[RMDB]
RNA sequence: GGGAACGACUCGAGUAGAGUCGAAAAUCGAGUGACAGUAGAUGGUUAGAUAUGGCUUAGCAGCUAUGAUUAUCGAGGGAGAAGUGGUCAUUGCUGCGGGGAAGCUUCAGGGCAAAAAAAUAGGGUAUUGCGGAUGGCUCAGGAAGGCCGCAGCGAGUGAGUCUCGGAUAUUCGUAUCCGAGACUCAAAAAGAAACAACAACAACAAC
Reactivity to 2A3 in 0.01 (KOAc 150mM, MgCl2 10mM, bicine 150mM(pH8.5), 24C), signal-to-noise 1, nucleotides 027 to 156: u030c010g000a020g030u000g020a120c080a030g020u020a030g020a040u030g040g000u120u040a050g020a090u110a050u100g090g000c030u060u040a020g010c050a010g000c090u000a070u100g010a020u020u030a060u180c130g020a140g010g050g010a020g020a000a120g050u020g040g010u020c040a070u000u170g000c050u000g030c040g020g000g000g020a050a040g000c000u040u050c050a050g020g000g030c000a070a070a000a030a000a000a000u100a050g040g020g000u080a130u040u120g030c000g000g050a040u080g090g000c000u020c010a030g090g020a050a010g070g030c000c030g000c020a020g010c020g060a030g050